[RMDB]
RNA sequence: GGGAACGACUCGAGUAGAGUCGAAAAGAUAUGGAUGACUUCAACAGCCUAUCUGAUUCGGAAACGAAUCUAGGACAUGAAGGAGUCCUAAGUCAAAUCCAAUACUUGCUUCGGCAAGUAUUGGAAAGUCUACGACAUAGUUCGCUAUGUCGUAGACAAAAGAAACAACAACAACAAC
Reactivity to DMS in 0.01 (KOAc 150mM, MgCl2 10mM, bicine 150mM(pH8.5), 24C), signal-to-noise 3, nucleotides 027 to 126: g000a020u000a300u000g010g010a000u000g010a300c000u000u010c000a030a150c210a120g010c020c000u010a020u000c180u000g010a040u000u000c000g020g000a120a060a190c000g000a020a000u000c000u010a010g020g010a080c100a130u000g010a000a010g020g000a300g000u000c000c000u010a020a110g000u000c040a100a120a170u000c000c010a010a010u000a010c000u000u000g000c000u000u010c260g020g000c000a000a010g010u000a010u000u000g000g000a000a000a030
Reactivity to 2A3 in 0.01 (KOAc 150mM, MgCl2 10mM, bicine 150mM(pH8.5), 24C), signal-to-noise 2, nucleotides 027 to 126: g010a020u040a030u090g000g020a010u030g030a030c010u000u000c030a140a160c050a280g120c010c010u040a120u160c180u100g000a000u000u000c000g030g000a050a020a030c000g000a000a000u000c000u000a020g000g020a090c040a200u090g010a010a000g030g010a020g010u000c000c010u030a080a000g080u010c010a120a000a100u000c010c000a000a000u000a010c000u000u000g000c010u040u080c190g150g010c000a020a000g000u010a010u000u010g000g000a000a020a000
Source information: An RNA of 177 nucleotides, treated with DMS and 2A3 and read out base by base. The RNA was probed in 150 mM KOAc, 10 mM MgCl2 and 150 mM bicine (pH 8.5) at 24 C. For DMS the reverse transcriptase was MarathonRT. Reactivities are given for positions 27 through 126. For DMS, 1,794 sequencing reads were counted.